[RMDB]
RNA sequence: GGGAACGACUCGAGUAGAGUCGAAAAUGAAUAUAUGUUUUGACAUACGCGAUAAUUGUUCAUUGGAGAAGUUCAUGUCUACUCCCAAUGCCAUCUUUAUUUCUGAUAGAAAAAUCAAGAAAUACCCUCCGCCUGCCCUUCGGGGCAGGCAAAAGAAACAACAACAACAAC
Reactivity to 2A3 in 0.01 (KOAc 150mM, MgCl2 10mM, bicine 150mM(pH8.5), 24C), signal-to-noise 2, nucleotides 027 to 129: u060g040a050a000u150a010u080a110u190g110u040u060u010u030g120a070c090a050u040a010c000g000c000g080a040u020a050a080u160u100g020u020u050c020a010u000u040g060g000a050g010a200a000g000u010u130c000a010u210g110u030c000u000a050c010u030c020c000c000a000a000u000g030c060c050a080u050c120u000u100u000a000u020u010u040c000u000g020a020u020a070g300a150a030a030a000a000u010c030a130a000g000a010a000a000u000a000c000c000c000u000c020c030
Reactivity to DMS in 0.01 (KOAc 150mM, MgCl2 10mM, bicine 150mM(pH8.5), 24C), signal-to-noise 2, nucleotides 027 to 129: u000g050a090a110u000a140u000a000u110g000u000u020u040u000g010a010c160a160u050a020c040g110c010g000a060u070a080a040u010u010g000u020u030c110a050u000u000g130g000a160g000a000a180g020u120u000c050a010u020g030u100c060u000a020c040u020c000c000c000a130a050u080g040c300c000a070u000c170u010u090u000a010u000u000u000c000u010g000a020u010a050g060a000a000a300a040a010u000c000a080a020g000a020a020a020u050a000c070c000c000u040c000c040